[RMDB]
RNA sequence: GGGAACGACUCGAGUAGAGUCGAAAAGCGAUGCCAAAGAGUGGGGGAAAUCUCGCGAGGGAAAUCCCAAGAAGGUCGAGAAGUCUCAAGCUACGAGGGGGGACCCCCGAGACGCUGGAGACGCCCGUAAUCGCUCUCUUCGGAGAGCGAAAAAGAAACAACAACAACAAC
Reactivity to DMS in 0.01 (KOAc 150mM, MgCl2 10mM, bicine 150mM(pH8.5), 24C), signal-to-noise 4, nucleotides 027 to 129: g050c050g000a080u120g010c000c100a100a120a140g020a000g080u040g060g110g020g020g050a020a040a210u010c020u010c150g140c150g000a210g010g000g000a010a100a180u020c030c040c010a130a080g010a060a110g010g000u020c010g030a090g040a080a060g030u000c000u040c040a080a050g020c020u070a070c070g010a280g080g000g010g000g000g040a170c030c010c000c000c010g000a200g010a090c250g030c000u000g010g030a000g030a000c060g000c020c040c040g000u040a010a000
Reactivity to 2A3 in 0.01 (KOAc 150mM, MgCl2 10mM, bicine 150mM(pH8.5), 24C), signal-to-noise 3, nucleotides 027 to 129: g030c030g050a050u050g070c020c030a050a090a010g120a030g080u100g050g050g000g000g050a050a030a030u030c040u000c010g010c030g030a080g000g020g000a010a020a020u040c000c000c000a000a010g020a000a010g010g020u040c030g010a000g030a160a000g010u030c010u000c010a030a020g000c040u040a080c070g050a030g010g020g000g000g000g200a130c020c000c000c000c010g010a030g000a030c020g020c010u030g020g020a010g000a010c020g010c010c000c000g000u070a040a070

Conditions: 150 mM KOAc, 10 mM MgCl2 and 150 mM bicine (pH 8.5), 24 C. This 170-nucleotide RNA was probed chemically with DMS and 2A3. DMS adducts were read by reverse transcription with MarathonRT. For DMS, 8,331 sequencing reads were counted. 2A3 adducts were read by reverse transcription with SuperScript II with manganese. Source: RMDB library 15KLIB, as collected in RNAgym.